The data come from the RNA Mapping Database (RMDB), libraries RFM100 and RFMREP.
This 177-nucleotide RNA was probed chemically with DMS and 2A3.
Reactivities are given for positions 27 through 126.
The reactions ran in a buffer of 150 mM KOAc, 10 mM MgCl2 and 150 mM bicine (pH 8.5), at 24 C.
RNA sequence: GGGAACGACUCGAGUAGAGUCGAAAACUUCACUUGUGUGACUUUUGCAAUGGGAAGAGAGAGAGAAGGUCCCCUUGGUACCUCAGCUCGGCCUUAUGGUGGCCUCUUUCCUUGAAGGGUGCAACAACUAGAGAUUAAUGUUCGCAUUAAUCUCUAGAAAAGAAACAACAACAACAAC
Reactivity to DMS in 0.01 (KOAc 150mM, MgCl2 10mM, bicine 150mM(pH8.5), 24C), signal-to-noise 9, nucleotides 027 to 126: c050u010u010c080a100c150u010u010g010u010g010u010g010a070c040u000u000u010u000g010c020a030a020u020g020g000g000a020a020g000a030g010a170g010a100g010a060g010a160a030g010g000u000c030c010c110c220u010u020g010g010u010a020c020c010u000c190a120g010c020u010c050g000g010c010c020u000u030a100u030g030g020u010g010g010c070c000u010c010u000u000u000c010c010u000u010g010a050a050g010g000g010u000g000c050a070a030c100a040a140
Reactivity to 2A3 in 0.01 (KOAc 150mM, MgCl2 10mM, bicine 150mM(pH8.5), 24C), signal-to-noise 9, nucleotides 027 to 126: c030u120u100c040a050c100u070u040g010u010g020u040g160a070c010u030u050u040u180g090c050a070a090u190g010g010g010a010a010g020a000g010a000g000a000g000a000g020a120a030g020g000u040c020c010c000c050u070u180g030g000u080a050c000c010u040c030a070g050c030u020c010g040g030c000c000u160u110a240u240g200g030u090g040g000c000c000u000c000u000u000u000c000c000u000u010g020a010a010g030g000g010u040g020c010a050a040c000a020a010